Overview
The record gives the reactivity of an RNA of 207 nucleotides to DMS and 2A3. For DMS the reverse transcriptase was MarathonRT. For 2A3 the reverse transcriptase was SuperScript II with manganese. Values are in units of 0.01, from 0 to 300, in steps of 10.
RNA sequence: GGGAACGACUCGAGUAGAGUCGAAAAUCACGAGUUCGCUCGUGAAAAAAAUCCUAAGUCACAGAGGACGAAGAGGCAACAGCUGGUCGGAAACGACCAGACAUGCCUCCGUCUACCCACCUGUGAUAUGGAAAAAAGGCACAGUUCGCUGUGCCAAGUACUCGUUACUAUUCGUAGUAACGAGUACAAAAGAAACAACAACAACAAC
Reactivity to DMS in 0.01 (KOAc 150mM, MgCl2 10mM, bicine 150mM(pH8.5), 24C), signal-to-noise 2, nucleotides 027 to 156: u000c010a000c010g000a050g010u000u020c300g050c010u010c000g060u000g010a000a000a000a130a090a100a190u000c000c000u000a070a230g010u010c020a010c000a010g000a150g000g010a040c000g020a210a050g000a060g000g000c000a060a130c110a190g000c020u000g000g040u000c030g000g020a130a060a300c020g070a000c000c000a000g010a000c020a300u010g010c010c000u000c010c000g000u000c000u000a030c000c010c050a300c130c000u020g020u000g000a020u000a290u000g000g000a000a000a040a040a150a190g020g020c030a030c040a060g000u000u000c300g010c010u010g000u000g020c000c000a000a090
Reactivity to 2A3 in 0.01 (KOAc 150mM, MgCl2 10mM, bicine 150mM(pH8.5), 24C), signal-to-noise 4, nucleotides 027 to 156: u030c000a000c000g000a010g030u100u090c130g100c060u010c020g000u000g020a080a010a000a000a000a000a000u030c040c010u070a170a050g020u000c010a000c010a000g020a020g010g020a000c010g030a190a070g010a000g010g020c020a060a030c050a190g050c010u000g000g000u020c010g000g020a120a090a090c010g000a000c000c000a000g010a010c000a020u020g010c000c000u000c000c000g000u000c010u050a070c030c030c020a050c010c000u010g000u000g000a010u010a040u060g030g030a060a010a020a020a050a130g020g020c020a000c000a000g020u090u110c160g060c170u010g000u000g000c010c000a000a000

The 2A3 profile rests on 4,589 reads. For DMS, 2,360 sequencing reads were counted. Reactivities are given for positions 27 through 156.